[RMDB]
Conditions: 150 mM KOAc, 10 mM MgCl2 and 150 mM bicine (pH 8.5), 24 C. This 177-nucleotide RNA was probed chemically with DMS and 2A3. The DMS profile rests on 2,041 reads. 2A3 adducts were read by reverse transcription with SuperScript II with manganese. It was measured as part of the RMDB library TTRDEL. For 2A3, 6,924 sequencing reads were counted.
RNA sequence: GGGAACGACUCGAGUAGAGUCGAAAAGAUAUGGAGAGGCGUUGGGAGACAUGGAAUCGGAAACGAUUCCUGUCGAAGAACAACGCUACCCACCUCCUAAGUCAAAAGUGGAUGUUCGCAUCCACAAGGUUAUGGAACAGUUCGCUGUUCCAUAACCAAAAGAAACAACAACAACAAC
Reactivity to DMS in 0.01 (KOAc 150mM, MgCl2 10mM, bicine 150mM(pH8.5), 24C), signal-to-noise 2, nucleotides 027 to 126: g000a010u010a030u000g020g020a000g010a250g000g000c000g020u000u010g000g010g000a030g000a000c000a010u020g000g000a030a000u000c000g000g000a020a010a040c000g000a010u010u000c000c000u000g010u000c000g030a060a130g000a120a170c010a000a020c010g000c010u010a030c230c140c090a170c290c020u000c000c000u000a000a100g000u010c010a070a020a070a090g010u000g000g010a000u000g010u000u050c250g030c020a010u000c000c010a010c020a050a050
Reactivity to 2A3 in 0.01 (KOAc 150mM, MgCl2 10mM, bicine 150mM(pH8.5), 24C), signal-to-noise 2, nucleotides 027 to 126: g000a000u010a000u060g020g010a040g060a120g000g040c020g010u030u010g020g020g000a010g000a010c020a050u300g010g000a020a000u010c000g010g000a020a010a000c010g000a000u000u000c000c010u010g000u020c000g000a220a000g000a000a000c000a000a000c000g000c000u030a030c040c000c020a260c060c010u010c010c000u000a000a020g020u010c030a010a020a060a190g010u000g000g000a010u030g040u080u110c300g030c120a000u000c000c000a010c000a000a040